[RMDB]
RNA sequence: GGGAACGACUCGAGUAGAGUCGAAAAUCGAAAUCAUCGGGAGUGAUCGAGAUGACGGUCCUGCCAUGAGACCGCAACGAGAGCAUGUCGCAUCGAAUGGACUCGGGGAGUCGGCAGCUUGCCCCACUAAGGCAGACGUUGUUCGCAACGUCUGCAACCAAUCUAGGUUCUUCGGAACCUAGAUUGGAAAAGAAACAACAACAACAAC
Reactivity to 2A3 in 0.01 (KOAc 150mM, MgCl2 10mM, bicine 150mM(pH8.5), 24C), signal-to-noise 3, nucleotides 027 to 156: u070c010g030a010a000a010u030c030a010u110c100g050g000g030a110g080u210g040a050u020c010g000a000g050a230u140g090a120c020g010g000u000c000c000u040g230c050c010a040u050g010a000g020a040c000c080g030c070a030a060c040g040a030g010a010g070c050a070u070g050u080c020g000c060a030u040c040g050a080a100u100g050g040a010c030u030c090g030g000g020g020a060g050u090c030g010g010c010a000g050c030u090u110g030c030c000c000c000a030c100u120a060a070g120g000c000a000g000a000c010g010u000u010g030u030u070c190g020c120a010a000c010g000u000c000u000g000c010a000a000
The record gives the reactivity of an RNA of 207 nucleotides to 2A3. Conditions: 150 mM KOAc, 10 mM MgCl2 and 150 mM bicine (pH 8.5), 24 C. It was measured as part of the RMDB library M2RFPK.